[RMDB]
RNA sequence: GGGAACGACUCGAGUAGAGUCGAAAAAGAUAGCAUACACUUGUGGUACAAUGGUACACUGUGCCAGUGUACAUUAUAUAAAACAACAUGACAGUUUUUAAAAUAAAUGUAGUUCUUAAGAUAGAAGAAACACAUUUUCAGUAACAAGAUUAGUAAAACUAGCCUACUGAUUCGUCAGUAGGCUAGUAAAAGAAACAACAACAACAAC
Reactivity to DMS in 0.01 (KOAc 150mM, MgCl2 10mM, bicine 150mM(pH8.5), 24C), signal-to-noise 2, nucleotides 027 to 156: a120g060a090u000a100g000c150a110u010a110c020a050c020u000u000g070u000g000g000u000a010c000a060a020u010g010g030u000a010c030a100c090u030g050u000g000c060c010a050g020u000g010u000a060c010a090u010u000a110u010a100u000a070a090a040a110c020a070a140c070a090u000g030a170c030a130g000u000u000u000u000u020a070a090a080a040u020a010a020a040u010g010u000a030g000u000u000c000u000u000a090a100g040a220u010a140g000a070a010g000a020a020a050c010a010c030a020u000u000u000u000c110a130g000u010a070a090c070a030a050g020a180u000u000a090g000u000a050a080a100
Reactivity to 2A3 in 0.01 (KOAc 150mM, MgCl2 10mM, bicine 150mM(pH8.5), 24C), signal-to-noise 3, nucleotides 027 to 156: a000g080a040u100a020g020c050a060u070a080c060a030c070u100u060g060u050g090g000u000a000c020a020a100u070g010g000u030a020c260a060c130u150g040u040g060c010c000a010g000u010g000u000a000c000a000u060u010a040u010a020u030a110a050a010a000c010a040a020c020a030u090g060a010c010a050g000u020u020u080u110u180a080a090a040a040u140a030a020a000u060g000u010a120g010u040u040c020u020u030a080a030g020a100u170a080g160a070a000g000a020a060a000c020a000c000a000u030u060u060u100c020a010g040u050a070a000c030a060a000g020a080u000u220a000g130u230a070a200a000